[RMDB]
RNA sequence: GGGAACGACUCGAGUAGAGUCGAAAAUUAGCAGUUUUGGAUUGGCCCUAAAGACAAAGUCAUUUCAUAAAUAGGGAAGUAAGACCUGGGGGAUUAAGUUCAAUCCACAAAGUUCUUGAACUUAUCAAUGAGGAACUUAUUUCGAUAAGUUCCUCAUAAAAGAAACAACAACAACAAC
Reactivity to 2A3 in 0.01 (KOAc 150mM, MgCl2 10mM, bicine 150mM(pH8.5), 24C), signal-to-noise 2, nucleotides 027 to 126: u130u020a010g050c020a010g040u000u100u240u190g090g030a030u020u100g040g000c000c000c000u110a130a160a010g030a030c050a080a160a010g020u110c070a110u050u190u070c030a050u180a260a060a010u060a090g070g000g000a070a020g220u060a020a020g000a020c010c010u010g000g000g040g000g000a020u090u020a000a000g000u000u000c000a010a010u020c000c010a060c030a100a270a000g020u110u020c080u110u040g000a010a010c020u010u080a040u180c100a030
Reactivity to DMS in 0.01 (KOAc 150mM, MgCl2 10mM, bicine 150mM(pH8.5), 24C), signal-to-noise 4, nucleotides 027 to 126: u000u000a110g010c080a100g010u010u000u000u000g000g010a070u010u000g000g000c020c040c040u000a060a070a130g020a110c140a060a070a110g010u010c050a060u000u010u000c070a070u010a030a050a100u010a060g010g000g000a080a090g000u000a070a080g010a090c020c020u000g000g010g020g000g000a150u010u000a010a020g010u000u010c010a010a020u010c130c060a050c190a060a090a090g000u010u010c130u000u000g010a020a030c020u000u000a010u000c130a080